[RMDB]
RNA sequence: GGGAACGACUCGAGUAGAGUCGAAAAGGUUACGAUCACCGAUCCGAAAGUGAGAUCGCCAGCUAACAUCUUCUCGCGGCCUUCUUCAUCAAUGAACAAGAUAUUGCAAUAUUCAUCAUCAGGCCCAUCUUCAUGCACAAGUUGCAUCGGAAGCGUAUCUACGCGUCAUGUUCGCAUGACGCGUAGAAAAAGAAACAACAACAACAAC
Reactivity to DMS in 0.01 (KOAc 150mM, MgCl2 10mM, bicine 150mM(pH8.5), 24C), signal-to-noise 1, nucleotides 027 to 156: g020g010u010u010a020c010g020a020u000c060a090c020c000g000a070u000c050c070g030a080a110a170g020u020g020a070g010a120u000c010g050c030c050a080g010c050u000a140a070c070a050u010c040u000u000c010u000c050g050c110g020g030c040c050u000u000c010u010u020c120a120u000c090a000a070u000g040a120a030c070a150a150g030a140u010a120u000u010g000c050a120a060u000a090u000u000c070a090u000c040a080u010c010a080g010g020c020c010c040a050u000c010u000u000c070a030u000g050c000a010c030a090a120g080u000u000g000c040a090u010c050g010g020a030a140g020c070g000u000a130
Reactivity to 2A3 in 0.01 (KOAc 150mM, MgCl2 10mM, bicine 150mM(pH8.5), 24C), signal-to-noise 2, nucleotides 027 to 156: g090g020u040u050a030c070g010a130u050c060a000c040c000g010a040u020c030c020g080a130a110a030g080u140g030a140g010a080u040c010g020c020c010a050g020c050u070a050a050c040a120u040c070u110u000c030u020c040g050c110g010g030c000c000u060u040c020u120u070c040a150u040c020a120a080u070g030a070a040c080a130a000g010a060u120a070u070u120g030c040a030a030u020a120u200u120c060a040u010c020a030u040c040a050g020g020c010c010c000a020u030c000u020u040c020a020u050g000c020a000c010a250a000g030u190u020g010c010a020u010c070g070g030a010a050g040c050g060u100a070